[RMDB]
RNA sequence: GGGAACGACUCGAGUAGAGUCGAAAAGUAAAAGAGGAGAAAGCGCGCACUCCUCAAGCGCGCAGAUGUACGUACGACAUCAGGUACGAACGCGCCAAGGGUGGGAGGCGCGAACCCACCCAAAAAACAAUAAAUCCUAGUUCGCUAGGAUUUAUUGAAAAGAAACAACAACAACAAC
Reactivity to 2A3 in 0.01 (KOAc 150mM, MgCl2 10mM, bicine 150mM(pH8.5), 24C), signal-to-noise 2, nucleotides 027 to 126: g040u060a000a080a150a110g050a030g020g010a050g050a090a100a010g020c020g010c000g000c000a030c060u030c010c000u000c010a000a010g020c030g010c000g010c010a010g000a070u140g010u030a030c050g000u030a020c050g120a030c070a170u100c120a090g100g020u030a010c040g020a060a000c000g060c020g030c070c050a130a070g060g000g010u090g010g010g020a050g050g000c020g000c000g010a000a000c000c000c010a020c000c000c000a000a300a030a000a000a000
Reactivity to DMS in 0.01 (KOAc 150mM, MgCl2 10mM, bicine 150mM(pH8.5), 24C), signal-to-noise 5, nucleotides 027 to 126: g020u010a050a060a120a130g010a030g000g000a020g020a070a080a120g010c030g000c000g020c020a190c010u000c010c020u000c020a070a060g010c060g020c000g010c080a060g000a060u000g010u000a070c040g020u010a040c070g000a090c140a060u010c110a070g010g000u000a020c030g010a090a100c040g020c030g000c020c130a100a100g010g010g010u010g000g000g020a080g020g000c020g000c040g000a060a080c000c010c000a040c010c000c010a000a000a050a070a020a020